[RMDB]
RNA sequence: GGGAACGACUCGAGUAGAGUCGAAAAAAGGUGCCAUCAUAUCGGUUAAGAUCUCUUAACUCUGAUGGCUUUCGAGUUAUGUGGUGCAUUGAAGCUCUCCCUUCAAAUGGUCGUACAGUUCCGUGAACUUCCCAGCAAGAUUCGUCUUGCUGGGAAGAAAAGAAACAACAACAACAAC
Reactivity to 2A3 in 0.01 (KOAc 150mM, MgCl2 10mM, bicine 150mM(pH8.5), 24C), signal-to-noise 1, nucleotides 027 to 126: a000a030g060g000u060g020c050c000a000u000c000a010u040a080u230c080g000g000u050u010a040a050g070a250u040c190u010c000u240u010a040a000c010u000c010u050g020a000u000g010g020c040u010u030u030c010g010a020g010u040u020a130u100g000u040g030g080u090g050c040a060u020u090g000a100a030g000c040u060c010u070c040c020c000u000u020c020a110a100a100u120g030g000u060c000g010u050a090c070a060g030u070u040c010c020g120u070g070a020a010
Reactivity to DMS in 0.01 (KOAc 150mM, MgCl2 10mM, bicine 150mM(pH8.5), 24C), signal-to-noise 2, nucleotides 027 to 126: a080a060g030g010u000g050c000c000a000u010c000a020u020a130u010c280g010g000u000u000a010a020g010a230u010c300u000c010u000u000a010a010c020u000c060u000g010a010u000g000g010c030u000u010u000c030g010a110g000u000u000a050u000g030u000g000g010u010g020c040a090u000u000g020a080a060g010c040u000c040u010c050c060c000u000u000c040a050a070a080u000g010g010u000c040g000u010a040c090a060g020u000u010c010c040g000u000g010a090a090
Structure probing data (2A3 and DMS) for a 177-nucleotide construct. The DMS profile rests on 2,017 reads. The 2A3 profile rests on 1,059 reads. 2A3 is a SHAPE reagent: it acylates the 2'-hydroxyl of flexible nucleotides of all four kinds. The RNA was probed in 150 mM KOAc, 10 mM MgCl2 and 150 mM bicine (pH 8.5) at 24 C.